[RMDB]
RNA sequence: GGGAACGACUCGAGUAGAGUCGAAAAUUCAGGGUGUAGUUAGAUCUCAUGUGUGGAAACCUUCUUCAUGCAUUCCAAAAACAUAUGAACUAGGUACUUAUGAUAAGUAUGGCAUAGACUUAUACUGUGGAAUUCUUUAUGCGAAACAUUAUAAUAAAGCGGAGAUAUGAUUCGUCAUAUCUCCGCUAAAAGAAACAACAACAACAAC
Reactivity to DMS in 0.01 (KOAc 150mM, MgCl2 10mM, bicine 150mM(pH8.5), 24C), signal-to-noise 1, nucleotides 027 to 156: u000u020c050a110g030g020g070u000g020u000a140g010u010u000a080g050a070u000c040u000c040a060u000g050u000g000u000g000g010a120a090a050c020c010u000u000c020u010u020c020a050u010g000c020a190u000u010c030c150a060a150a080a050a240c040a050u000a070u000g000a030a100c010u010a060g010g020u040a060c040u010u000a090u000g020a090u000a020a110g010u000a080u010g020g000c040a060u010a070g000a050c080u000u000a070u000a060c070u020g030u000g030g040a100a120u000u000c030u000u000u000a030u010g000c020g010a120a040a220c080a070u000u010a070u010a040a070u000a010a130
Reactivity to 2A3 in 0.01 (KOAc 150mM, MgCl2 10mM, bicine 150mM(pH8.5), 24C), signal-to-noise 2, nucleotides 027 to 156: u080u000c030a020g030g050g010u020g020u070a060g060u060u040a050g020a120u020c040u010c080a070u120g040u000g020u010g040g000a030a020a040c010c000u100u070c030u080u020c060a020u040g070c010a030u030u080c030c040a030a030a020a040a090c050a060u180a130u140g030a040a010c010u010a060g000g070u130a020c000u080u080a020u240g060a080u030a070a010g010u030a020u060g030g000c000a010u010a030g010a030c000u010u090a020u050a060c050u020g020u010g070g010a040a080u070u000c020u000u060u030a020u050g030c010g000a010a070a010c020a020u100u160a080u130a300a080u220a120a090
Chemical mapping of a 207-nucleotide RNA with DMS and 2A3. The data come from the RNA Mapping Database (RMDB), library OK3TST. DMS adducts were read by reverse transcription with MarathonRT. Reactivities are given for positions 27 through 156.